[RMDB]
Chemical mapping of a 207-nucleotide RNA with 2A3. Conditions: 150 mM KOAc, 10 mM MgCl2 and 150 mM bicine (pH 8.5), 24 C. Source: RMDB library RSTRND, as collected in RNAgym. As a SHAPE reagent, 2A3 marks flexible, mostly unpaired nucleotides at the ribose 2'-OH.
RNA sequence: GGGAACGACUCGAGUAGAGUCGAAAACCCAACGGAAUCGCCGUCCGUCUUCCCUGCCACUCGGGUAGCGUCCGGCUAAAUCAAUAGAGUGGAUACGCAUGUAGAACCGAUGGCAGAGGAUUUGCGGACGCGGGUUCAAUUCCCGCCGCCUCCACCAUCCUAUCAACAGCUUCGGCUGUUGAUAGGAAAAAGAAACAACAACAACAAC
Reactivity to 2A3 in 0.01 (KOAc 150mM, MgCl2 10mM, bicine 150mM(pH8.5), 24C), signal-to-noise 1, nucleotides 027 to 156: c010c000c000a020a030c020g090g050a060a030u040c010g000c090c060g050u000c000c010g060u020c070u010u000c000c000c000u010g000c000c020a080c100u000c000g050g000g020u080a010g000c020g020u010c070c040g040g030c020u030a070a060a140u230c110a040a110u090a130g030a010g180u120g010g010a010u070a090c000g020c070a080u190g090u280a070g040a180a060c000c000g000a000u000g000g000c020a000g080a070g090g010a030u090u040u210g010c000g000g000a000c020g010c010g000g000g000u110u110c010a040a110u020u050c000c000c000g000c050c040g010c000c000u040c010c000a040c000c010a070